[RMDB]
RNA sequence: GGGAACGACUCGAGUAGAGUCGAAAAGAUAUGGAGAUAGCGAAGCGACGAUCUAGAUCGGAUCGGAAACGAUCCGAGUCUAGGGAGCUUCCUAUCUCCUAAGUCAAAAGGAAGUGUUCGCACUUCCGUACUUAAAAGAGUUCGCUCUUUUAAGUACAAAAGAAACAACAACAACAAC
Reactivity to DMS in 0.01 (KOAc 150mM, MgCl2 10mM, bicine 150mM(pH8.5), 24C), signal-to-noise 9, nucleotides 027 to 126: g010a040u000a300u010g000g000a010g000a010u000a010g010c240g010a020a010g010c000g010a100c300g010a040u010c000u000a010g000a220u000c010g010g000a000u000c000g010g010a070a090a200c000g000a010u000c010c000g000a010g010u000c000u000a010g010g000g000a040g010c000u000u000c000c000u000a000u000c000u000c000c000u000a010a050g010u010c040a110a080a120a200g010g000a020a020g020u000g010u010u020c290g020c010a020c010u000u000c000c010
Reactivity to 2A3 in 0.01 (KOAc 150mM, MgCl2 10mM, bicine 150mM(pH8.5), 24C), signal-to-noise 6, nucleotides 027 to 126: g030a010u080a050u160g010g000a010g000a010u010a000g190c280g130a030a000g020c010g300a300c030g010a130u020c010u000a000g000a020u000c010g010g010a000u000c010g010g020a040a070a000c010g000a000u010c000c010g010a020g060u030c000u000a000g010g000g000a010g000c000u000u010c000c010u000a000u000c000u010c000c000u000a010a000g000u000c010a000a000a040a110g000g010a010a000g010u030g060u170u250c300g090c140a010c000u010u000c000c010